Source: RMDB library OK3TST, as collected in RNAgym. Structure probing data (DMS and 2A3) for a 207-nucleotide construct. The RNA was probed in 150 mM KOAc, 10 mM MgCl2 and 150 mM bicine (pH 8.5) at 24 C. For DMS the reverse transcriptase was MarathonRT.
[RMDB]
RNA sequence: GGGAACGACUCGAGUAGAGUCGAAAAGUGCUUCCCACUACCAACAACACCUCGGUGGAGCCAGGACAUAAUGAGUCGGAGUCCCAGAGGACUACGAUCGAUGUGAAGCAGGCGGUGAGUGAUGUUACCGGAUGUGGUAAGUGCGAUAAGCUUGAGAGGUGAACAUGAAAUUCGUUUCAUGUUCACCAAAAGAAACAACAACAACAAC
Reactivity to DMS in 0.01 (KOAc 150mM, MgCl2 10mM, bicine 150mM(pH8.5), 24C), signal-to-noise 1, nucleotides 027 to 156: g020u010g010c000u000u000c030c000c020a240c060u020a280c030c020a080a170c030a000a140c020a040c000c010u000c020g010g050u000g050g000a280g000c020c000a180g000g000a140c020a140u000a080a090u000g000a140g060u000c000g000g010a030g020u010c000c000c070a280g010a190g030g000a010c020u000a040c010g000a030u010c020g000a120u000g030u000g010a070a130g010c100a180g050g070c050g000g040u000g010a230g000u010g020a060u030g000u000u000a080c070c040g000g000a120u000g040u000g040g010u000a060a010g040u000g000c090g000a080u000a040a160g040c040u000u000g000a100g010a200
Reactivity to 2A3 in 0.01 (KOAc 150mM, MgCl2 10mM, bicine 150mM(pH8.5), 24C), signal-to-noise 4, nucleotides 027 to 156: g050u040g010c000u010u020c030c060c000a010c010u100a140c000c000a060a100c000a020a010c000a050c000c000u010c010g210g110u130g130g050a010g000c010c010a030g000g040a010c000a010u210a140a130u260g050a070g100u030c000g020g010a010g010u020c020c000c020a070g090a180g060g000a000c000u000a020c000g020a010u040c020g050a020u040g030u020g040a070a030g120c070a050g090g000c030g000g170u160g030a020g000u070g080a300u000g010u000u030a030c010c100g010g010a030u050g000u010g010g010u010a010a020g000u000g030c010g030a020u050a210a030g090c080u110u120g080a090g000a000